[RMDB]
RNA sequence: GGGAACGACUCGAGUAGAGUCGAAAACAAAGGGGUUUCGGCUCCCAAGCGGUCUGACGCCCUGUCACGGUUUCCCUGCGGAGCUGUGCCCGGGGCCCCGACGGAUUCCGGUCCGUCGCAGGGGUGGCCAAGUUUACAUGUUCGCAUGUAAACUUGGAAAAGAAACAACAACAACAAC
Reactivity to 2A3 in 0.01 (KOAc 150mM, MgCl2 10mM, bicine 150mM(pH8.5), 24C), signal-to-noise 2, nucleotides 027 to 126: c020a030a130a030g070g030g010g000u070u170u160c040g020g000c000u060c020c010c010a030a040g110c080g040g040u040c030u030g020a020c050g120c110c050c050u120g050u030c010a020c090g030g040u020u210u090c020c010c030u060g020c140g010g000a000g000c020u000g010u030g010c030c020c000g000g000g000g000c000c000c000c020g000a010c000g000g010a010u080u060c060c210g140g000u000c000c010g030u000c000g000c040a070g000g040g010g020u080g050g030
Reactivity to DMS in 0.01 (KOAc 150mM, MgCl2 10mM, bicine 150mM(pH8.5), 24C), signal-to-noise 2, nucleotides 027 to 126: c070a060a110a140g020g000g000g020u000u010u000c030g020g050c030u000c000c010c100a200a130g030c110g000g000u010c030u010g010a110c070g000c140c070c080u000g010u020c030a030c100g000g000u000u020u000c020c010c050u020g010c160g010g010a020g030c000u000g010u000g010c000c020c020g030g010g000g020c010c010c000c050g020a020c000g020g000a020u000u000c230c170g020g010u000c010c010g020u000c000g010c170a100g010g000g030g000u020g010g030
The record gives the reactivity of an RNA of 177 nucleotides to 2A3 and DMS. The DMS profile rests on 1,623 reads. The RNA was probed in 150 mM KOAc, 10 mM MgCl2 and 150 mM bicine (pH 8.5) at 24 C. For 2A3 the reverse transcriptase was SuperScript II with manganese. Reactivities are given for positions 27 through 126. DMS adducts were read by reverse transcription with MarathonRT.